[RMDB]
RNA sequence: GGGAACGACUCGAGUAGAGUCGAAAAACCUAAGGCGAGGCCGACAGGCGUAGUCGAUGGACAACGGGUUGAUAUUCCCGUACCCGUGUGAACGCGCCCCUGGUGAAUCAGUGAUGCUAAGCGCCCUCCCUCCGAGUCUUUUCGAAGACUCGGAGGGAAAAGAAACAACAACAACAAC
Reactivity to 2A3 in 0.01 (KOAc 150mM, MgCl2 10mM, bicine 150mM(pH8.5), 24C), signal-to-noise 2, nucleotides 027 to 126: a010c000c000u060a100a020g050g000c020g010a030g070g020c000c020g130a090c100a020g000g000c000g000u000a050g000u070c000g000a000u040g060g000a030c060a080a000c110g000g000g000u070u100g210a110u000a040u170u030c000c040c010g000u010a020c020c000c010g010u050g000u050g010a090a000c010g000c000g020c100c000c000c040u040g010g050u060g030a090a020u050c000a020g080u080g090a090u090g020c000u050a040a000g010c010g060c000c000c000u080